This 177-nucleotide RNA was probed chemically with 2A3 and DMS.
[RMDB]
RNA sequence: GGGAACGACUCGAGUAGAGUCGAAAAUCGAACUAGUACAGCGAAGCGGGACUAUACGCAGGAGGGGCGCUCGCAGCCUCUCCAUGGAGAAAAACACCCCAGGGACAGAGGGCUGGAUGCGCCAGCGUCCCAGUCCUCAAUUCGUUGAGGACUGGGAAAAAGAAACAACAACAACAAC
Reactivity to 2A3 in 0.01 (KOAc 150mM, MgCl2 10mM, bicine 150mM(pH8.5), 24C), signal-to-noise 3, nucleotides 027 to 126: u090c000g010a030a040c050u050a020g100u090a030c030a030g050c050g100a090a010g030c050g020g020g000a020c030u030a040u100a190c080g010c050a040g040g050a040g020g050g000g000c020g000c050u070c080g300c040a010g000c000c000u030c000u000c010c010a000u000g030g010a040g030a030a170a000a020a010c050a080c000c040c000c000a010g000g000g010a030c060a120g060a080g050g080g010c010u020g040g000a040u100g000c010g010c030c050a030g050c030g030
Reactivity to DMS in 0.01 (KOAc 150mM, MgCl2 10mM, bicine 150mM(pH8.5), 24C), signal-to-noise 7, nucleotides 027 to 126: u010c040g000a100a100c090u000a090g010u010a070c080a060g010c050g010a080a110g020c060g000g000g010a110c040u010a080u000a070c090g020c060a110g010g010a070g020g010g000g000c000g020c050u000c160g030c070a100g010c010c000u000c010u000c000c010a030u000g010g000a070g000a040a070a090a120a120c200a110c060c020c010c020a040g000g010g010a050c140a100g010a080g010g000g000c020u010g010g000a070u010g010c060g010c010c020a070g010c090g000
The 2A3 profile rests on 3,393 reads. The reactions ran in a buffer of 150 mM KOAc, 10 mM MgCl2 and 150 mM bicine (pH 8.5), at 24 C. For DMS the reverse transcriptase was MarathonRT.